[RMDB]
RNA sequence: GGGAACGACUCGAGUAGAGUCGAAAAACAAUCUGGUUCGCCAGAUUGUCAAUGUCUUCCUAAAAUCCUUGGAAGACUGUUUAUAUAGAAUAAAGGUCGAAAGUACCUGUGCUUUCGAGCACAGGAAUCACUAUCACAAGUUCGCUUGUGAUAGUGAAAAAGAAACAACAACAACAAC
Reactivity to DMS in 0.01 (KOAc 150mM, MgCl2 10mM, bicine 150mM(pH8.5), 24C), signal-to-noise 4, nucleotides 027 to 126: a040c000a000a000u000c000u000g000g010u000u010c260g020c000c000a000g000a010u000u000g000u000c080a100a090u010g000u000c000u000u000c000c000u000a010a010a010a140u000c000c010u000u000g000g000a020a000g000a020c010u010g000u000u000u010a120u010a200u010a170g010a110a090u010a050a150a010g000g000u000c210g010a090a040a080g010u000a100c000c010u000g010u000g000c000u000u000u000c200g000a010g020c010a000c000a010g010g000a050a040
Reactivity to 2A3 in 0.01 (KOAc 150mM, MgCl2 10mM, bicine 150mM(pH8.5), 24C), signal-to-noise 6, nucleotides 027 to 126: a000c000a000a000u010c000u000g000g040u040u040c120g040c060c000a000g000a010u010u000g000u000c010a000a060u120g000u000c000u000u010c000c000u010a010a000a010a120u020c000c000u000u010g010g000a010a000g000a000c000u000g000u000u160u010a300u020a060u050a120g110a140a080u210a280a190a010g020g000u010c040g030a100a110a020g040u060a080c000c000u010g000u010g010c010u090u060u160c300g060a000g000c000a000c000a000g000g000a000a010
An RNA of 177 nucleotides, treated with DMS and 2A3 and read out base by base. It was measured as part of the RMDB library M2PK50. For DMS, 5,044 sequencing reads were counted.